[RMDB]
RNA sequence: GGGAACGACUCGAGUAGAGUCGAAAAGAUAUGGAGAAUGAAGCCUUUUGACGUUUCAGGGUCGGAAACGACCCGGGAAACGAUAAGGCUCAUUCUCCUAAGUCAAACUUCGCGUUCGCGCGAAGAAGUUGAACACUUACUUCGGUAAGUGUUCAACAAAAGAAACAACAACAACAAC
Reactivity to DMS in 0.01 (KOAc 150mM, MgCl2 10mM, bicine 150mM(pH8.5), 24C), signal-to-noise 2, nucleotides 027 to 126: g010a020u000a300u000g000g000a020g000a050a010u000g010a070a040g010c000c000u010u000u020u000g030a270c070g010u010u000u000c000a300g000g010g020u000c000g010g000a100a100a180c020g000a000c000c000c010g000g010g010a000a010a010c000g040a200u000a010a030g010g010c000u000c000a010u000u000c010u000c010c000u000a010a040g000u000c030a090a210a190c010u000u000c010g010c010g020u010u020c210g040c010g020c000g010a000a010g000a040a140
Reactivity to 2A3 in 0.01 (KOAc 150mM, MgCl2 10mM, bicine 150mM(pH8.5), 24C), signal-to-noise 2, nucleotides 027 to 126: g020a010u060a020u170g000g000a010g030a010a010u050g050a220a070g010c000c030u010u080u110u190g300a170c030g020u000u030u000c030a000g000g000g000u010c010g020g030a030a100a110c010g000a000c010c000c000g030g110g000a000a010a000c010g020a030u070a050a000g000g010c000u000c000a000u000u000c000u010c000c000u000a010a010g000u000c030a000a050a120c000u010u010c000g000c000g020u030u080c300g000c000g000c010g140a000a000g010a020a010